About this RNA
The data come from the RNA Mapping Database (RMDB), libraries RFM100 and RFMREP. Chemical mapping of a 177-nucleotide RNA with 2A3 and DMS. The reactions ran in a buffer of 150 mM KOAc, 10 mM MgCl2 and 150 mM bicine (pH 8.5), at 24 C. For 2A3 the reverse transcriptase was SuperScript II with manganese.
RNA sequence: GGGAACGACUCGAGUAGAGUCGAAAAGGAAGUGAAACAUCUCAGUACCCACAGGAAGAGAAAACAACAUGUGAUUCCGUGAGUAGUGGCGAGCGAAAGCGGAAGAGGCUAAACCAUGGGUGUGUGAUCUCAGAAGACGGUUCGCCGUCUUCUGAGAAAAAGAAACAACAACAACAAC
Reactivity to 2A3 in 0.01 (KOAc 150mM, MgCl2 10mM, bicine 150mM(pH8.5), 24C), signal-to-noise 2, nucleotides 027 to 126: g120g070a000a040g050u080g040a180a050a020c010a110u100c030u030c070a090g000u080a020c000c000c000a040c020a070g030g050a090a000g010a030g070a100a150a000a000c060a030a000c030a070u110g080u060g110a080u000u000c000c000g000u000g030a000g000u010a000g010u040g090g090c250g030a010g020c000g000a040a000a000g000c000g030g000a000a000g000a000g010g010c000u070a000a100a010c060c000a040u040g000g000g110u030g030u060g000u020g130a030
Reactivity to DMS in 0.01 (KOAc 150mM, MgCl2 10mM, bicine 150mM(pH8.5), 24C), signal-to-noise 2, nucleotides 027 to 126: g030g010a080a080g040u010g000a130a100a090c110a080u010c020u000c040a070g030u020a060c060c040c020a160c150a120g040g020a080a110g000a070g020a100a180a040a020c050a110a140c100a040u000g020u010g000a190u010u000c000c000g000u000g000a060g000u000a050g010u000g000g050c260g000a200g000c000g000a170a070a230g010c000g000g030a000a000g000a050g050g010c110u000a050a030a090c080c010a080u000g000g020g000u000g000u000g010u000g000a080
For 2A3, 794 sequencing reads were counted.